[RMDB]
This 307-nucleotide RNA was probed chemically with DMS and 2A3.
For DMS the reverse transcriptase was MarathonRT.
The RNA was probed in 150 mM KOAc, 10 mM MgCl2 and 150 mM bicine (pH 8.5) at 24 C.
2A3 adducts were read by reverse transcription with SuperScript II with manganese.
Reactivities are given for positions 27 through 266.
RNA sequence: GGGAACGACUCGAGUAGAGUCGAAAAGCUCACGGUGACGUGAGCAAGCGUUAACUACGGUUAACGCAAGGAUUACGUUCGCGUAAUCCAGUAAAAAAGAUAAAAAAAAGGAAACUCCCGACUUCCUCAGGAUGAAGUUGAUUCUUUAUCCAUACCUUGGUGCCGGGACGCCGAUUGAGGAAUGGGCGGCGCCUUCCAAAUUUAUUGGAAGGGUUUAUAAGGCAACAUCGAACAUAUAACAAGCUAACCAGUUCGUGAGAACUGGAACAUACGAAUUCGUUCGUAUGAAAAGAAACAACAACAACAAC
Reactivity to DMS in 0.01 (KOAc 150mM, MgCl2 10mM, bicine 150mM(pH8.5), 24C), signal-to-noise 1, nucleotides 027 to 266: g000c000u000c010a030c000g000g000u000g010a120c040g010u010g030a000g000c010a000a100g000c000g020u000u000a000a000c000u000a130c110g060g000u000u000a060a000c000g020c020a080a080g000g000a010u000u000a000c000g010u010u020c110g030c000g000u010a010a000u010c000c010a090g000u010a000a060a070a170a120a180g020a120u060a000a000a010a110a090a080a250a200g020g000a020a120a070c000u000c000c040c020g030a250c120u000u000c000c000u000c220a100g020g000a010u020g010a000a060g000u000u020g020a150u000u000c020u010u000u000a040u010c010c000a150u000a090c100c050u000u000g000g010u000g020c020c030g030g030g000a100c040g020c000c050g000a140u000u010g010a030g000g000a010a040u010g000g000g070c000g030g040c100g000c010c000u000u000c000c010a020a100a300u000u010u010a070u020u000g000g000a020a000g000g000g000u020u020u020a030u020a220a120g000g000c050a020a050c150a000u000c160g000a170a060c160a030u000a080u000a000a050c120a060a140g000c210u000a110a160c000c000a020g010u000u000c010g000u000g000a070g010a010a030c010u000g000g010a050a060
Reactivity to 2A3 in 0.01 (KOAc 150mM, MgCl2 10mM, bicine 150mM(pH8.5), 24C), signal-to-noise 1, nucleotides 027 to 266: g000c000u000c000a000c000g090g000u040g040a020c000g000u000g000a000g000c010a000a000g010c000g000u000u020a020a000c010u060a080c250g100g020u000u000a000a000c010g000c000a030a040g010g000a000u020u030a000c000g050u080u070c260g000c000g160u000a000a000u000c000c000a020g000u020a040a080a000a020a070a020g190a080u300a070a170a120a090a020a000a000a020g040g000a020a130a030c050u000c010c000c000g030a020c020u090u040c000c000u040c020a000g000g000a000u000g000a000a000g010u110u090g080a130u290u090c000u000u000u020a000u000c000c000a070u010a170c020c000u060u040g060g020u030g050c030c000g030g000g050a020c000g000c040c000g040a020u060u120g060a020g000g100a160a020u200g020g080g000c050g000g040c070g220c000c000u000u000c000c000a030a090a090u100u300u170a100u140u150g000g000a010a010g000g000g000u000u070u070a100u060a000a010g010g000c000a030a020c000a080u250c020g100a030a040c050a010u150a010u120a300a000c080a080a080g140c100u100a020a160c000c030a000g000u000u020c020g080u060g040a170g000a060a000c000u020g010g020a000a000